[RMDB]
Chemical mapping of a 177-nucleotide RNA with DMS. DMS adducts were read by reverse transcription with MarathonRT. Values cover nucleotides 27 to 126.

RNA sequence: GGGAACGACUCGAGUAGAGUCGAAAACCGAAUAGGGAUGACACGGGGCGGGCGAAAGCCUGUUCACAGCCGGUUUCCGGGCCCGUCAUCCGGGUGGGUUGCGAGAGGCGGCAUGCAAAUGCCGUCCGAAGAGACUGUUGUUCGCAACAGUCUCUUCAAAAGAAACAACAACAACAAC
Reactivity to DMS in 0.01 (KOAc 150mM, MgCl2 10mM, bicine 150mM(pH8.5), 24C), signal-to-noise 1, nucleotides 027 to 126: c020c010g020a110a060u010a150g010g010g010a020u010g000a020c000a090c190g000g050g020g000c120g000g000g010c020g000a080a060a130g000c000c000u000g010u000u000c050a060c150a300g000c000c000g000g000u000u000u010c040c020g010g000g030c030c030c140g010u000c010a010u020c000c000g010g010g030u000g010g020g000u000u010g000c010g010a110g050a160g010g010c010g000g000c010a010u000g000c210a070a140a020u000g010c000c000g040u000c010c040